An RNA of 207 nucleotides, treated with 2A3 and DMS and read out base by base. The DMS profile rests on 4,192 reads. The reactions ran in a buffer of 150 mM KOAc, 10 mM MgCl2 and 150 mM bicine (pH 8.5), at 24 C. For 2A3 the reverse transcriptase was SuperScript II with manganese.
RNA sequence: GGGAACGACUCGAGUAGAGUCGAAAACGCUGGGACACCUCAAGAGCGAUAAGAUCUGAAGCGCGCACGGAUCUUUUGACGCUUAGUUGACAUGGUGUCCUGUGCUGAAGCGCGCACGGCAACCGAAAGGUGCGAAACUACCCAAUUCGUUGGGUAGACACGUCUUUUGAUUCGUCAAAAGACGUGUAAAAGAAACAACAACAACAAC
Reactivity to 2A3 in 0.01 (KOAc 150mM, MgCl2 10mM, bicine 150mM(pH8.5), 24C), signal-to-noise 5, nucleotides 027 to 156: c020g000c020u020g000g000g010a000c000a000c000c000u090c150a260a140g040a000g080c020g070a120u050a190a000g000a000u000c000u020g050a190a040g010c000g000c010g000c020a020c030g000g010a010u020c000u030u090u100u160g210a050c030g020c010u060u050a060g030u140u240g110a100c080a190u180g010g010u010g010u020c000c000u000g010u030g000c030u090g020a110a040g000c010g010c000g000c010a000c010g060g000c010a060a100c000c010g050a100a040a020g000g020u020g030c010g040a110a040a030c000u010a000c000c000c000a010a010u130u110c220g070u110u000g000g010g000u000a000g020
Reactivity to DMS in 0.01 (KOAc 150mM, MgCl2 10mM, bicine 150mM(pH8.5), 24C), signal-to-noise 2, nucleotides 027 to 156: c050g020c020u010g000g000g020a060c010a020c010c000u000c110a120a290g000a050g000c000g030a170u000a000a030g000a030u000c000u010g020a070a120g030c030g050c000g010c010a300c010g020g000a010u000c000u020u000u000u000g000a160c050g000c000u000u000a060g020u000u000g020a160c100a130u000g050g020u000g050u010c000c000u010g010u000g050c010u000g000a030a060g030c050g010c010g060c000a270c030g000g020c020a040a080c020c000g000a040a080a130g020g010u000g000c030g010a050a020a080c000u010a030c000c000c000a020a120u000u000c180g030u000u000g010g000g000u000a000g000